[RMDB]
RNA sequence: GGGAACGACUCGAGUAGAGUCGAAAAUCACGUCUGACCCUCAACGACUCAGGGCAAGAGGGCCAGAGAGGAAGCCAAGCCUGGACAAAAGAGGGAGUGGGGAAACCAGCAGAGCACAGAGGUUAACCCUUUGGAGGUACUUCGGUACCUCCAAAGGAAAAGAAACAACAACAACAAC
Reactivity to DMS in 0.01 (KOAc 150mM, MgCl2 10mM, bicine 150mM(pH8.5), 24C), signal-to-noise 1, nucleotides 027 to 126: u030c110a060c150g060u010c010u010g010a100c040c000c010u000c010a110a180c270g000a130c040u000c100a070g040g020g040c110a130a300g010a050g010g000g020c040c020a030g010a040g010a010g030g060a110a120g000c050c030a090a210g000c020c010u000g010g020a100c050a100a050a080a060g000a100g000g000g030a080g040u000g010g000g010g000a040a150a070c040c000a080g000c100a060g000a040g000c080a110c080a100g000a050g000g000u000u010a080a080c090